[RMDB]
RNA sequence: GGGAACGACUCGAGUAGAGUCGAAAAAACUCAGCUAGGGAGAGUAUAACAUUCAUGUUGACGAGACCUAGACGAAACACAGAGGAAAAUUAUAAAUCACUGGAUAGUAUUAGUAAUGACUCUGUGUAAAACUCUUCUACGUUCGCGUAGAAGAGAAGCUAAUCCAAUGGUUCGCCAUUGGAUUAGCAAAAGAAACAACAACAACAAC
Reactivity to 2A3 in 0.01 (KOAc 150mM, MgCl2 10mM, bicine 150mM(pH8.5), 24C), signal-to-noise 2, nucleotides 027 to 156: a000a000c020u020c010a020g010c010u000a000g020g000g010a090g000a010g040u100a140u090a300a040c050a050u100u230c090a080u290g000u030u040g060a030c010g020a010g060a090c030c000u000a000g000a000c000g010a010a000a000c000a000c000a000g030a010g000g040a160a060a090a000u020u010a050u060a010a120a010u030c040a000c060u050g130g070a090u230a300g010u020a020u060u000a030g020u000a010a010u020g020a040c000u000c000u000g000u010g000u000a000a000a000a000c000u000c000u010u030c000u000a010c000g000u000u080c210g010c020g140u000a000g000a000a010g000a000g000a010a000
Reactivity to DMS in 0.01 (KOAc 150mM, MgCl2 10mM, bicine 150mM(pH8.5), 24C), signal-to-noise 1, nucleotides 027 to 156: a040a030c060u000c000a060g000c010u000a020g000g000g000a140g000a280g020u000a220u000a020a020c020a110u000u000c100a060u000g000u000u020g000a030c080g000a300g010a100c050c010u000a000g000a300c090g000a080a150a020c000a010c010a020g020a010g030g000a100a060a060a060u000u040a070u040a050a000a040u000c060a180c070u000g010g000a210u000a100g030u000a300u000u000a120g010u000a020a040u000g010a100c010u000c000u000g020u050g000u000a000a010a080a100c020u000c000u000u000c000u010a000c000g000u000u000c300g020c020g080u000a010g010a000a000g000a000g000a060a070
About this RNA:
The record gives the reactivity of an RNA of 207 nucleotides to 2A3 and DMS. For 2A3 the reverse transcriptase was SuperScript II with manganese. The data come from the RNA Mapping Database (RMDB), library M2RFPK.